This 207-nucleotide RNA was probed chemically with DMS and 2A3. For DMS, 4,049 sequencing reads were counted. High DMS reactivity at an A or C suggests that its Watson-Crick edge is free. The 2A3 profile rests on 2,229 reads. Source: RMDB library OK3TST, as collected in RNAgym. The reactions ran in a buffer of 150 mM KOAc, 10 mM MgCl2 and 150 mM bicine (pH 8.5), at 24 C.

RNA sequence: GGGAACGACUCGAGUAGAGUCGAAAAAGGGCGAUGGCGGUGCGGUACCGAUCAUUUGUCGGUACGGCCGUCCUACGGUUCGUUCGCGAACAGACUUUCUGGAUAACAAAGAUGAUGCAUCUUCCUGGUAUCCAGUAGAACCUUGAACGUCGAGGUGCACAGUGUUAGCUUUCGAGCUAACACUGUGAAAAGAAACAACAACAACAAC
Reactivity to DMS in 0.01 (KOAc 150mM, MgCl2 10mM, bicine 150mM(pH8.5), 24C), signal-to-noise 2, nucleotides 027 to 156: a000g000g010g020c040g010a180u000g000g010c010g040g030u010g010c010g020g010u010a000c000c000g020a020u010c210a300u010u000u010g030u000c000g020g000u000a000c000g000g020c000c000g000u010c010c040u010a050c010g020g000u000u000c050g010u000u010c200g030c020g030a010a190c080a140g000a080c020u000u000u010c020u010g020g020a010u000a030a020c010a020a040a000g020a050u000g010a280u000g020c120a070u010c010u000u000c020c200u000g010g000u000a010u000c000c010a040g000u000a060g010a060a040c040c000u000u020g010a070a150c060g030u000c010g010a110g010g030u000g000
Reactivity to 2A3 in 0.01 (KOAc 150mM, MgCl2 10mM, bicine 150mM(pH8.5), 24C), signal-to-noise 5, nucleotides 027 to 156: a010g060g040g020c090g080a080u090g030g000c060g070g090u300g300c070g030g030u060a000c000c000g010a010u040c040a250u150u250u300g010u010c010g010g020u000a000c000g000g010c000c000g030u120c020c010u040a070c060g060g000u040u020c010g010u020u040c150g020c040g160a060a010c040a060g020a020c010u030u060u020c010u000g000g000a000u010a010a000c000a000a300a000g010a000u070g120a120u280g080c060a000u000c000u030u030c000c020u000g000g010u020a020u000c000c000a000g000u010a010g000a030a020c010c000u020u030g010a040a020c120g020u040c060g020a010g000g000u030g030